Description: The data come from the RNA Mapping Database (RMDB), library OK3TST. An RNA of 207 nucleotides, treated with 2A3 and read out base by base. Values cover nucleotides 27 to 156.
RNA sequence: GGGAACGACUCGAGUAGAGUCGAAAAGGGUUUGAGCCAUCGCCCGAAUACGAUGGUUGAUACAAGUCGACAUUGUACGCGACGUAGUACGUACUCAUUAGUGCGAAAGCACGGUUAGUCCGACUGGGCAGGGACGAUCUUCUGUCAAUACUUAGAAGCCCAGUAUAUCCUUCGGGAUAUACUGGGCAAAAGAAACAACAACAACAAC
Reactivity to 2A3 in 0.01 (KOAc 150mM, MgCl2 10mM, bicine 150mM(pH8.5), 24C), signal-to-noise 1, nucleotides 027 to 156: g120g020g000u070u120u120g050a020g080c010c000a070u040c000g010c000c000c010g050a080a000u040a090c020g000a000u000g000g000u000u080g010a000u010a050c060a260a000g000u000c000g000a020c010a160u040u090g020u100a030c000g000c070g070a060c040g000u020a000g000u030a100c070g000u000a000c000u000c010a030u030u150a020g060u000g000c000g080a100a000a000g000c010a000c000g000g010u000u020a020g000u030c040c000g020a020c070u010g000g000g000c010a060g000g000g000a060c000g000a050u010c020u140u000c010u100g090u080c010a010a140u130a150c130u090u100a070g060a180a020
Conditions: 150 mM KOAc, 10 mM MgCl2 and 150 mM bicine (pH 8.5), 24 C.